Structure probing data (2A3 and DMS) for a 177-nucleotide construct.
Reactivities are given for positions 27 through 126.
The RNA was probed in 150 mM KOAc, 10 mM MgCl2 and 150 mM bicine (pH 8.5) at 24 C.
As a SHAPE reagent, 2A3 marks flexible, mostly unpaired nucleotides at the ribose 2'-OH.
The DMS profile rests on 666 reads.
[RMDB]
RNA sequence: GGGAACGACUCGAGUAGAGUCGAAAAGAUAUGGAGAAAGAAGAGUCAUCGAUCGAUCGCGUAUGUAACAAGUGGUCGGAAACGACCACCGCCCAUACGCGAUCGGGAGACUCCUUUCUCCUAAGUCCGCAGAUAAAGUGUUCGCACUUUAUCUGCGAAAAGAAACAACAACAACAAC
Reactivity to 2A3 in 0.01 (KOAc 150mM, MgCl2 10mM, bicine 150mM(pH8.5), 24C), signal-to-noise 1, nucleotides 027 to 126: g000a050u160a140u250g030g000a050g080a000a070a000g160a280a090g060a020g050u010c070a260u300c300g210a170u120c000g000a000u010c010g000c000g000u000a000u030g090u150a150a240c110a270a110g000u000g010g030u000c020g020g040a130a100a050c020g010a000c020c000a000c000c010g080c030c060c000a000u030a020c000g000c030g010a000u010c010g030g010g000a030g000a010c000u000c010c010u000u000u000c000u000c010c010u010a030a000g000u000c000
Reactivity to DMS in 0.01 (KOAc 150mM, MgCl2 10mM, bicine 150mM(pH8.5), 24C), signal-to-noise 1, nucleotides 027 to 126: g020a050u010a300u020g000g040a010g020a000a050a040g040a050a110g030a010g070u000c020a290u000c150g010a100u030c000g000a000u020c000g070c000g050u020a010u000g000u010a060a110c280a220a110g010u000g000g010u000c000g040g000a060a100a230c010g000a040c000c000a000c020c040g000c300c110c020a010u000a000c000g040c000g000a000u000c000g000g030g000a030g020a000c000u000c010c000u000u000u000c000u000c000c010u000a040a090g000u020c030